[RMDB]
RNA sequence: GGGAACGACUCGAGUAGAGUCGAAAACGUUGCAACAACCCCGUGGUUUGGGCGCAGUGGGGCAAGGUAUUUGUCCGGUGCGCAGUGAAGCCACUGCAACAAAAAUGUGUGAUCUUCGGAUCACACAGGACACGGAUAUGUUCGCAUAUCCGUGUCCAAAAGAAACAACAACAACAAC
Reactivity to 2A3 in 0.01 (KOAc 150mM, MgCl2 10mM, bicine 150mM(pH8.5), 24C), signal-to-noise 2, nucleotides 027 to 126: c030g000u010u000g010c030a090a120c010a050a200c110c000c000c000g000u020g010g020u010u040u010g040g060g000c020g000c030a190g210u190g070g090g000g020c000a000a000g290g110u300a270u170u000u000g000u000c000c030g000g120u010g020c020g010c000a010g020u190g300a010a020g000c000c000a000c020u120g000c010a000a000c030a020a000a050a040a000u090g000u010g000u000g010a010u000c020u010u050c250g050g000a000u020c000a000c000a000c000a020
An RNA of 177 nucleotides, treated with 2A3 and read out base by base. Values cover nucleotides 27 to 126.